[RMDB]
RNA sequence: GGGAACGACUCGAGUAGAGUCGAAAACGAGGCUGCCCGUAUCGGUGCCCGUCUUUCGACGAUCCAGUUUGGCGUAGACGCAUGGGAGGAAUUUAUUAACCUCCCAGAAGCGCAGGUGCCGUGGUGGGUAAACGGCAGAUUUCGAUCUGCCGUUUACAAAAGAAACAACAACAACAAC
Reactivity to DMS in 0.01 (KOAc 150mM, MgCl2 10mM, bicine 150mM(pH8.5), 24C), signal-to-noise 3, nucleotides 027 to 126: c040g000a120g020g040c070u010g040c030c010c070g030u020a050u010c150g000g020u000g010c010c020c030g010u000c060u010u010u020c040g010a100c040g020a100u010c050c070a070g010u010u010u000g010g010c030g020u010a080g000a120c040g030c060a120u000g010g000g000a010g010g020a080a070u000u020u000a140u040u010a130a140c000c010u000c000c000c000a000g010a060a180g000c050g010c040a100g020g000u000g000c010c010g020u000g000g020u020g000g000
Reactivity to 2A3 in 0.01 (KOAc 150mM, MgCl2 10mM, bicine 150mM(pH8.5), 24C), signal-to-noise 2, nucleotides 027 to 126: c030g010a110g110g000c090u120g070c050c030c030g000u140a110u230c020g000g000u010g010c010c020c030g020u040c080u020u090u030c070g040a060c000g010a060u080c030c030a040g060u040u100u110g020g010c010g020u040a040g050a110c040g000c070a060u020g010g010g010a020g000g060a060a110u100u160u060a150u130u230a220a070c000c000u000c000c000c000a010g000a020a000g000c010g000c040a040g080g000u030g020c000c010g000u020g000g050u120g030g050

This 177-nucleotide RNA was probed chemically with DMS and 2A3. It was measured as part of the RMDB library OK2TRN. 2A3 adducts were read by reverse transcription with SuperScript II with manganese. Values cover nucleotides 27 to 126. Conditions: 150 mM KOAc, 10 mM MgCl2 and 150 mM bicine (pH 8.5), 24 C. DMS adducts were read by reverse transcription with MarathonRT.